[RMDB]
Conditions: 150 mM KOAc, 10 mM MgCl2 and 150 mM bicine (pH 8.5), 24 C. This 207-nucleotide RNA was probed chemically with 2A3 and DMS. 2A3 adducts were read by reverse transcription with SuperScript II with manganese. For DMS, 8,827 sequencing reads were counted. Values cover nucleotides 27 to 156.

RNA sequence: GGGAACGACUCGAGUAGAGUCGAAAAACAUCUCACUGGGAAGUGAGAUGUGAGUCCGCAUGGGAAUGCGGACGGUCGAUUUGACAAAAAUCCUAAUUGUCAAGAGGAGAACGAGAUGUACGGGAGUAGAUCGAGUUCUGCUCGCAGAAUAGGCAGCGUGUAGUCGUGUAUUCGUACACGACUGCACAAAAGAAACAACAACAACAAC
Reactivity to 2A3 in 0.01 (KOAc 150mM, MgCl2 10mM, bicine 150mM(pH8.5), 24C), signal-to-noise 3, nucleotides 027 to 156: a000c000a000u000c000u000c000a000c000u010g010g030g040a050a010g010u000g000a000g000a000u010g000u000g000a010g000u000c000c000g000c000a010u030g040g030g060a140a030u000g000c000g000g010a000c000g000g000u010c000g040a110u030u010u110g000a010c000a000a020a000a000a000u010c000c000u020a020a040u030u020g010u010c020a030a030g000a000g030g040a010g000a010a010c010g000a000g000a020u020g020u130a010c010g020g060g020a100g000u000a010g000a020u010c010g000a000g000u000u000c000u000g020c000u000c010g000c030a010g050a050a060u090a050g020g000c030a010g030c020
Reactivity to DMS in 0.01 (KOAc 150mM, MgCl2 10mM, bicine 150mM(pH8.5), 24C), signal-to-noise 4, nucleotides 027 to 156: a020c000a030u000c010u000c010a020c000u020g030g040g000a300a020g030u000g000a020g000a000u000g030u000g010a120g010u010c000c010g000c010a030u000g020g020g020a270a090u000g000c020g000g010a000c010g010g010u000c020g010a120u000u010u000g030a100c000a000a020a010a050a020u000c020c020u000a080a230u000u010g000u000c010a090a100g000a070g020g010a060g000a040a050c040g010a300g010a060u000g000u000a040c040g020g020g000a260g020u000a060g010a020u000c020g000a300g000u000u000c010u000g000c010u000c010g000c040a080g010a090a100u000a060g000g020c020a110g000c120